[RMDB]
RNA sequence: GGGAACGACUCGAGUAGAGUCGAAAAGAGUGGAGGAAAUCUCGGAAAGCUUCCCCCAAGAAGAACUGGGACGCUCUCAAGAAGGAGGAGAUUUCCCGAAAGCUGGAGACUCGCGGAAUUUCAUUCAAGGCAGUAAACUUCGGUUUACUGAAAAGAAACAACAACAACAAC
Reactivity to 2A3 in 0.01 (KOAc 150mM, MgCl2 10mM, bicine 150mM(pH8.5), 24C), signal-to-noise 9, nucleotides 027 to 129: g060a010g020u110g020g040a070g010g020a040a040a050u040c020u020c030g040g030a090a060a010g010c010u050u040c010c010c000c000c020a030a020g080a060a010g020a100a070c100u080g000g000g000a020c040g010c010u010c000u010c040a030a080g080a070a030g110g040a020g020g000a020g000a010u030u020u010c000c000c000g030a060a020a010g010c020u030g010g010a030g010a040c010u010c030g030c030g020g030a030a040u100u120u090c040a050u100u080c040a070a020g130g000
Reactivity to DMS in 0.01 (KOAc 150mM, MgCl2 10mM, bicine 150mM(pH8.5), 24C), signal-to-noise 9, nucleotides 027 to 129: g010a050g010u020g000g030a020g010g010a040a050a050u020c050u020c020g020g020a050a040a010g000c070u000u000c040c040c010c090c080a110a100g020a100a060g000a050a030c140u000g000g000g010a040c160g030c070u030c060u010c060a090a090g000a070a060g030g020a090g020g010a100g020a040u020u030u020c020c020c020g050a080a050a100g020c030u030g000g000a090g030a020c060u000c050g030c040g040g030a090a040u040u040u020c100a080u040u030c070a060a120g020g020